Description: Structure probing data (2A3 and DMS) for a 207-nucleotide construct. The 2A3 profile rests on 8,348 reads. For DMS the reverse transcriptase was MarathonRT. The DMS profile rests on 4,088 reads. Source: RMDB library M2RFPK, as collected in RNAgym.
RNA sequence: GGGAACGACUCGAGUAGAGUCGAAAAACGUGGUACGCCUCGAAAAUAUGACCGGUGUCAUAGCCUCUAGCACACAGAGGUCGCGUGGGUUCAACUCCCCCCCUUUUCCGAGGGUAUCGGAAACCAAAAAACACAAUUUGGUUCGCCAAAUUGUGAAGUUUAUUGGAUAGUUCGCUAUCCAAUAAACAAAAGAAACAACAACAACAAC
Reactivity to 2A3 in 0.01 (KOAc 150mM, MgCl2 10mM, bicine 150mM(pH8.5), 24C), signal-to-noise 5, nucleotides 027 to 156: a010c030g030u030g040g040u100a040c050g140c040c020u040c030g050a090a040a050a050u090a060u070g020a030c080c130g210g060u180g020u110c020a030u020a030g000c010c010u020c010u040a070g080c090a030c010a010c010a150g010a000g020g000u020c010g000c010g020u080g030g020g000u080u110c040a050a060c070u030c000c000c000c000c000c000c010u050u040u000u000c000c000g000a000g000g000g010u060a010u010c000g000g000a000a000a000c020c020a040a070a040a020a020a000c000a000c000a010a000u000u000u000g010g000u010u010c020g020c050c000a000a000a000u000u000g000u000g000a020a000
Reactivity to DMS in 0.01 (KOAc 150mM, MgCl2 10mM, bicine 150mM(pH8.5), 24C), signal-to-noise 3, nucleotides 027 to 156: a060c080g010u010g000g000u000a020c040g010c020c010u030c060g000a110a050a080a080u020a040u000g010a000c020c090g010g040u000g040u000c030a020u000a070g000c050c000u000c030u000a130g020c120a170c130a130c130a140g010a050g040g030u000c040g020c050g020u000g000g010g060u000u000c060a110a300c100u000c000c010c020c000c020c030c030u010u000u010u000c000c010g000a040g030g020g000u000a050u020c010g000g000a010a070a100c180c060a010a040a020a140a090a170c000a010c010a000a010u000u010u000g010g010u010u030c300g030c020c000a000a000a010u010u030g010u000g000a010a060